[RMDB]
RNA sequence: GGGAACGACUCGAGUAGAGUCGAAAAGCUUAAUAACCUGCGCUGAGCCCUUCUCCCCCAGCUUGCCUGUGUCCUAGGGAAUUGGAAGGUCAUCCUUCACAGGAUCGCGUGGAAGUCCUGCUCGGGGUCCAAACAUGGUAAUUCGUUACCAUGUUAACGUAGUUCAAAUAUUCGUAUUUGAACUACGAAAAGAAACAACAACAACAAC
Reactivity to 2A3 in 0.01 (KOAc 150mM, MgCl2 10mM, bicine 150mM(pH8.5), 24C), signal-to-noise 4, nucleotides 027 to 156: g020c020u090u130a090a040u090a210a160c010c040u070g020c050g000c060u070g060a060g020c000c030c000u100u050c080u070c020c010c000c000c000a000g000c020u050u120g020c000c000u050g000u020g010u070c020c030u030a050g000g000g070a070a100u100u080g050g010a040a030g030g000u070c020a090u120c010c000u040u040c020a020c010a040g030g020a050u060c060g000c010g050u020g010g020a030a030g020u020c000c010u010g000c010u010c030g020g030g000g000u030c020c010a040a010a000c000a000u000g000g000u000a010a020u040u020c040g010u010u000a000c000c000a000u000g000u010u010a010a000
Reactivity to DMS in 0.01 (KOAc 150mM, MgCl2 10mM, bicine 150mM(pH8.5), 24C), signal-to-noise 3, nucleotides 027 to 156: g020c030u010u010a080a100u000a100a130c040c020u020g020c050g030c030u000g010a120g020c020c010c030u000u000c040u000c020c000c000c020c020a110g000c040u010u010g010c030c020u020g000u010g020u000c060c030u000a120g020g040g000a060a130u000u000g000g000a080a060g020g020u000c090a130u000c020c010u000u000c060a090c040a050g010g010a050u000c060g030c060g000u010g030g010a120a090g020u000c020c020u010g000c050u000c070g020g000g020g010u000c040c050a110a020a020c000a010u000g000g010u000a020a100u000u000c270g030u000u000a010c000c000a010u010g000u000u010a030a170